[RMDB]
RNA sequence: GGGAACGACUCGAGUAGAGUCGAAAACUGAGCGUUCGCGCUCAGGAUACUGGGGUCAUCGUUUGACGGACAUGCUGAACACUGAAGCCUCCACGGUGUGAACAGCAACAGCCCGAGAUGACGGAGGCACCCUCACAUAACGAGUUCGCUCGUUAAAGCCAACUAAGUAAUUCGUUACUUAGUUGGCAAAAGAAACAACAACAACAAC
Reactivity to 2A3 in 0.01 (KOAc 150mM, MgCl2 10mM, bicine 150mM(pH8.5), 24C), signal-to-noise 6, nucleotides 027 to 156: c000u000g000a010g010c000g020u110u150c260g020c000g020c150u000c000a000g000g020a030u150a090c110u110g010g010g060g020u060c020a020u040c060g180u080u120u210g150a110c070g000g010a030c030a120u260g000c000u000g030a060a000c010a000c000u030g010a120a020g030c000c000u020c010c010a040c010g000g000u000g000u010g120a160a050c010a010g010c020a090a090c040a130g020c020c000c000g040a050g000a090u080g020a010c060g000g000a000g010g000c000a060c000c000c000u070c010a110c030a100u110a040a010c000g010a010g020u090u090c170g080c130u010c000g020u010u030a100a050a010
Reactivity to DMS in 0.01 (KOAc 150mM, MgCl2 10mM, bicine 150mM(pH8.5), 24C), signal-to-noise 1, nucleotides 027 to 156: c020u000g000a070g020c000g070u000u000c230g040c000g000c000u010c000a000g000g010a140u000a100c050u000g070g010g050g070u190c010a090u010c030g060u030u050u020g000a300c060g000g000a020c000a300u010g030c000u000g010a150a020c010a030c000u000g000a040a110g040c030c030u010c000c030a300c110g070g030u000g000u000g030a110a160c060a010g010c000a060a150c090a090g000c030c000c020g000a080g000a150u000g000a000c030g000g000a060g090g040c000a210c010c030c000u000c110a060c110a140u000a040a020c000g040a010g030u000u010c200g030c000u000c030g030u010u000a050a110a170